[RMDB]
Description
An RNA of 207 nucleotides, treated with 2A3 and DMS and read out base by base. The RNA was probed in 150 mM KOAc, 10 mM MgCl2 and 150 mM bicine (pH 8.5) at 24 C. For 2A3 the reverse transcriptase was SuperScript II with manganese.
RNA sequence: GGGAACGACUCGAGUAGAGUCGAAAAGCGUACUACAACCCGGAGCAGAGACAUGCUCUCUUUGCAUUCUAUCCCAAAUAGGAUAGAAGAUUUGAGAGCAACAGCUCUGCCCGGAGUUGUAUCGCAAAACGAGCAUAACGUUCGCGUUAUGCUCGAAGUCUUUAAGAGACUUCGGUCUCUUAAAGACAAAAGAAACAACAACAACAAC
Reactivity to 2A3 in 0.01 (KOAc 150mM, MgCl2 10mM, bicine 150mM(pH8.5), 24C), signal-to-noise 4, nucleotides 027 to 156: g000c000g030u080a060c040u010a000c040a000a000c000c000c010g000g000a270g000c000a000g010a000g010a080c020a180u040g000c000u000c000u000c020u020u030u020g040c050a120u010u000c000u000a000u040c020c010c020a230a290a230u300a140g000g000a000u000a000g000a000a010g000a020u050u050u040g000a000g000a010g000c010a000a030c030a020g000c000u000c000u000g000c000c000c000g000g020a030g000u000u010g000u000a010u130c000g000c030a000a070a000a090c010g000a000g020c000a000u010a000a010c010g030u090u090c260g010c000g080u010u010a000u010g000c000u000c000g000a010a000
Reactivity to DMS in 0.01 (KOAc 150mM, MgCl2 10mM, bicine 150mM(pH8.5), 24C), signal-to-noise 1, nucleotides 027 to 156: g010c030g020u000a050c060u000a040c010a030a020c000c010c050g040g020a070g040c000a050g010a050g020a080c080a300u020g000c010u010c010u000c000u000u010u010g000c120a300u010u010c020u000a010u000c000c020c010a050a120a190u000a030g000g010a000u000a010g020a010a020g010a280u000u000u020g000a040g020a030g050c010a020a020c090a100g000c000u000c000u000g000c000c000c000g000g020a010g010u000u010g000u010a020u000c040g020c030a070a030a080a250c000g010a020g010c000a020u000a000a000c000g030u010u010c300g030c000g000u000u010a000u000g000c000u030c000g010a010a120